[RMDB]
RNA sequence: GGGAACGACUCGAGUAGAGUCGAAAACAUAGGUGAACGUGCCGCCAGAUACCGUCGCCUUCGUGUUGGAUGACGGCAGCAUGGUGGCGCGCAGGUUGUAGGUGCUGCCUGCCUGCAUGAUCGUGCAAACGUACGGUGUUUUCGAACACCGUACGUUAAAAGAAACAACAACAACAAC
Reactivity to DMS in 0.01 (KOAc 150mM, MgCl2 10mM, bicine 150mM(pH8.5), 24C), signal-to-noise 3, nucleotides 027 to 126: c080a110u000a070g020g010u000g010a080a150c050g010u000g010c000c000g030c010c010a050g010a160u000a020c010c000g010u000c020g010c010c000u000u010c300g000u000g010u010u010g000g040a060u000g020a020c000g000g010c040a010g000c120a190u000g010g020u000g010g010c000g010c030g020c100a060g010g010u000u010g000u000a090g010g010u000g010c100u010g020c040c030u000g000c030c010u000g000c010a020u000g000a090u000c070g000u000g000c080a060
Chemical mapping of a 177-nucleotide RNA with DMS. For DMS the reverse transcriptase was MarathonRT. Conditions: 150 mM KOAc, 10 mM MgCl2 and 150 mM bicine (pH 8.5), 24 C. Reactivities are given for positions 27 through 126.